[RMDB]
RNA sequence: GGGAACGACUCGAGUAGAGUCGAAAAUCUACAUAGUUCGCUAUGUAGAAAAACGCGCACGCGCGCGCACGCGCUCACUCUCGCACACGCACGCGCAGGCAAAAACGUUGCGGUUCGCCGCAACGAACAGUUGAUGUGAGUUCGCUCACAUCAACUGAAAAGAAACAACAACAACAAC
Reactivity to DMS in 0.01 (KOAc 150mM, MgCl2 10mM, bicine 150mM(pH8.5), 24C), signal-to-noise 2, nucleotides 027 to 126: u000c000u000a000c010a010u000a010g020u020u020c200g020c010u000a000u000g000u000a000g000a010a070a000a070a080c140g010c050g030c020a060c080g010c030g010c010g040c010g020c050a130c100g010c010g010c080u000c140a090c180u010c100u000c050g000c010a050c150a090c180g000c000a030c020g000c000g000c050a130g010g020c010a050a000a040a030a120c030g010u000u000g000c000g000g010u000u020c200g010c000c000g000c000a000a000c000g000a060a100
Reactivity to 2A3 in 0.01 (KOAc 150mM, MgCl2 10mM, bicine 150mM(pH8.5), 24C), signal-to-noise 2, nucleotides 027 to 126: u000c000u000a010c000a000u010a000g030u030u050c180g040c080u010a000u020g020u020a020g000a010a000a010a000a000c100g030c030g000c040a020c060g030c000g000c000g000c010g030c010a000c070g020c010g010c030u100c070a140c070u110c010u040c030g000c010a030c010a010c100g010c000a010c010g000c000g000c010a020g070g000c020a090a000a000a030a060c000g020u000u010g000c010g010g080u020u030c210g020c060c010g000c000a000a010c000g020a020a020
Chemical mapping of a 177-nucleotide RNA with DMS and 2A3. It was measured as part of the RMDB library M2PK50. The RNA was probed in 150 mM KOAc, 10 mM MgCl2 and 150 mM bicine (pH 8.5) at 24 C. DMS adducts were read by reverse transcription with MarathonRT.